Annotation:
Structure probing data (2A3) for a 207-nucleotide construct.
RNA sequence: GGGAACGACUCGAGUAGAGUCGAAAAAAACGCUAACGAAGAUAAUUACGCUUUAGCUGCUGCCUAAUAUAGGCAGCCCGUCAGUCCAGGGUUCCUGCGCCUUGGGUAGCUGGCGUCAUUAAGUCAGGCCUUUUGAGUGGGAAGGUUAAACUCUAGACACGAUUACUAGGUUCGCCUAGUAAUCGUGAAAAGAAACAACAACAACAAC
Reactivity to 2A3 in 0.01 (KOAc 150mM, MgCl2 10mM, bicine 150mM(pH8.5), 24C), signal-to-noise 3, nucleotides 027 to 156: a000a000a000c100g000c020u020a020a020c070g060a120a060g080a170u180a230a150u250u130a090c030g040c060u090u030u050a020g010c030u060g000c000u000g000c010c000u150a300a250u270a100u070a160g000g010c020a000g000c000c000c000g000u000c010a000g070u230c000c000a000g000g000g000u000u010c000c000u010g010c000g000c000c000u000u000g000g000g010u010a000g020c000u000g010g020c010g100u060c020a070u120u210a030a000g040u100c000a000g010g040c000c000u000u000u010u000g000a000g000u000g000g000g030a140a090g010g000u010u050a010a000a000c000u000c000u000a000g000a000
As a SHAPE reagent, 2A3 marks flexible, mostly unpaired nucleotides at the ribose 2'-OH. Values cover nucleotides 27 to 156.